[RMDB]
RNA sequence: GGGAACGACUCGAGUAGAGUCGAAAACAGAACUGGAUGGGCCGUGUGCUUAACCAGGACAAGAUCUCCUUCUCUCCAACGUUGUUGCCAACUCAUGAUCCUCCUAACCUGUGCUUGGAGAGACGUGCUACCAUAUAGGUGUUCGCACCUAUAUGAAACUAAUUACAAGAUUCGUCUUGUAAUUAGUAAAAGAAACAACAACAACAAC
Reactivity to 2A3 in 0.01 (KOAc 150mM, MgCl2 10mM, bicine 150mM(pH8.5), 24C), signal-to-noise 3, nucleotides 027 to 156: c040a030g070a070a030c000u040g030g000a080u060g060g070g030c030c120g300u220g120u280g120c020u040u020a070a060c010c000a010g050g050a030c040a050a050g040a130u040c050u050c010c000u150u000c020u000c010u050c050c030a060a060c110g020u010u010g000u000u010g020c060c070a070a060c050u030c070a090u100g050a300u060c020c030u040c010c000u070a070a090c020c050u130g060u140g120c040u030u040g010g010a000g010a010g010a020c010g020u020g030c020u070a130c010c000a010u000a000u000a010g020g010u010g040u030u030c180g010c090a000c000c000u000a000u000a000u000g020a000a000
Reactivity to DMS in 0.01 (KOAc 150mM, MgCl2 10mM, bicine 150mM(pH8.5), 24C), signal-to-noise 2, nucleotides 027 to 156: c060a100g010a060a140c020u000g010g010a150u000g010g010g000c000c030g030u000g040u000g040c010u000u000a040a120c030c020a040g010g000a150c010a090a140g010a120u010c020u010c020c050u010u000c030u000c020u000c040c000a030a160c080g000u000u000g000u000u000g030c010c020a050a170c030u000c040a100u000g020a120u000c010c000u010c040c020u010a050a050c050c040u010g020u000g010c030u000u000g000g020a060g000a020g010a030c070g000u000g010c050u000a140c090c010a010u000a010u000a010g000g030u000g000u010u000c300g030c020a010c000c010u000a000u010a000u000g010a080a100